[RMDB]
RNA sequence: GGGAACGACUCGAGUAGAGUCGAAAACACUCAUAUGUAGGAUGGAAAGAGCUGGAUUCACUAACUGUGAGUAUGUUACUGACGCACAGGCAAUCUUUCGAGCGUUAAACAUGAAAGCAGCAGUUGGUGCUGUAACGCGGUUCGCCGCGUUACAGCAAAAAGAAACAACAACAACAAC
Reactivity to DMS in 0.01 (KOAc 150mM, MgCl2 10mM, bicine 150mM(pH8.5), 24C), signal-to-noise 2, nucleotides 027 to 126: c220a060c070u040c010a120u000a040u000g030u050a130g000g000a110u030g020g000a030a090a050g000a030g000c030u010g000g000a170u010u020c060a090c010u000a000a040c030u000g000u030g000a110g000u000a000u000g000u020u020a120c240u000g000a000c020g040c000a130c100a100g000g000c270a070a050u030c030u100u060u020c120g030a170g000c020g000u000u000a020a030a020c010a050u000g000a020a050a050g020c090a180g070c010a010g000u000u000g000g000
Reactivity to 2A3 in 0.01 (KOAc 150mM, MgCl2 10mM, bicine 150mM(pH8.5), 24C), signal-to-noise 2, nucleotides 027 to 126: c050a000c010u090c040a060u190a060u160g130u050a010g030g030a020u040g060g020a060a060a040g000a100g000c000u050g000g000a210u090u130c020a000c000u010a100a050c010u000g040u020g040a050g060u070a000u000g040u020u020a090c040u110g000a000c000g060c060a020c010a050g150g060c110a120a030u100c040u050u300u130c180g000a020g000c000g000u010u050a030a080a000c000a040u060g020a170a000a060g020c060a010g020c000a000g050u020u030g020g040
Overview: The record gives the reactivity of an RNA of 177 nucleotides to DMS and 2A3. 2A3 adducts were read by reverse transcription with SuperScript II with manganese. For DMS the reverse transcriptase was MarathonRT.